The record gives the reactivity of an RNA of 170 nucleotides to 2A3 and DMS. The RNA was probed in 150 mM KOAc, 10 mM MgCl2 and 150 mM bicine (pH 8.5) at 24 C. Source: RMDB library 15KLIB, as collected in RNAgym. The DMS profile rests on 16,505 reads.
[RMDB]
RNA sequence: GGGAACGACUCGAGUAGAGUCGAAAACUGUGAUCCAUUUCUCGAGGGUCUCCUCCCUUGUUCCCCUUCGUCCUCUCCUCGUCUCGGAUUGGCUCAUUCUCAGGUCGGGCGAGGGUCCUCAGUUCUCCGCGUUGGAGCUUCGGCUCCAACAAAAGAAACAACAACAACAAC
Reactivity to 2A3 in 0.01 (KOAc 150mM, MgCl2 10mM, bicine 150mM(pH8.5), 24C), signal-to-noise 5, nucleotides 027 to 129: c040u040g050u090g080a030u030c020c000a120u090u110u030c070u030c010g050a130g040g020g030u020c050u030c020c010u050c010c000c000u010u070g020u000u020c000c000c000c000u030u070c030g050u020c020c000u030c020u020c000c010u010c030g090u000c030u020c070g050g020a080u030u080g010g000c030u010c050a130u150u000c040u010c030a040g020g020u030c010g020g010g000c010g020a040g000g010g000u020c000c000u030c010a020g000u040u000c020u000c000c010g050c000
Reactivity to DMS in 0.01 (KOAc 150mM, MgCl2 10mM, bicine 150mM(pH8.5), 24C), signal-to-noise 3, nucleotides 027 to 129: c110u070g000u040g020a070u030c080c000a150u030u040u020c090u020c070g060a120g020g050g020u010c050u010c040c040u030c020c050c050u010u040g000u000u040c020c000c020c100u030u030c080g040u050c030c040u010c000u000c020c050u020c050g020u030c040u030c050g040g000a110u070u020g030g000c100u030c000a120u020u010c020u000c050a100g000g000u010c040g000g010g010c050g010a130g040g000g050u040c040c030u010c060a060g000u010u000c020u030c020c040g010c150